[RMDB]
RNA sequence: GGGAACGACUCGAGUAGAGUCGAAAACGGAACCGCUGAGACGUGGCCGUCUGCCCACCCUUGGUUAAAUCUAGCAGACUGGUUUCCGGGUGCGCUUUGCCUGUCGUGCUGCCCGGCGACGAGACCUAACGGCCAGGAUAAGCAUGUAGGGCCGGGGCCAAUUACACGACUUCGGUCGUGUAAUUGGAAAAGAAACAACAACAACAAC
Reactivity to 2A3 in 0.01 (KOAc 150mM, MgCl2 10mM, bicine 150mM(pH8.5), 24C), signal-to-noise 2, nucleotides 027 to 156: c040g020g030a100a150c020c010g020c030u060g010a030g000a100c020g000u000g010g000c010c000g000u000c000u020g040c000c020c000a070c000c010c010u070u130g060g010u090u120a050a130a120u110c160u100a080g020c030a000g040a140c010u020g030g020u020u020u030c020c010g040g000g010u020g000c030g000c020u130u170u150g070c020c020u060g050u130c010g000u010g000c010u040g020c000c020c000g000g000c010g000a010c000g010a010g040a060c020c020u050a140a040c030g010g000c000c020a020g000g060a120u070a080a050g020c030a020u110g070u120a120g000g040g020c000c010g000g000g000g020

Annotation
Chemical mapping of a 207-nucleotide RNA with 2A3. Conditions: 150 mM KOAc, 10 mM MgCl2 and 150 mM bicine (pH 8.5), 24 C. As a SHAPE reagent, 2A3 marks flexible, mostly unpaired nucleotides at the ribose 2'-OH. For 2A3, 1,505 sequencing reads were counted. Source: RMDB library ARCHII, as collected in RNAgym.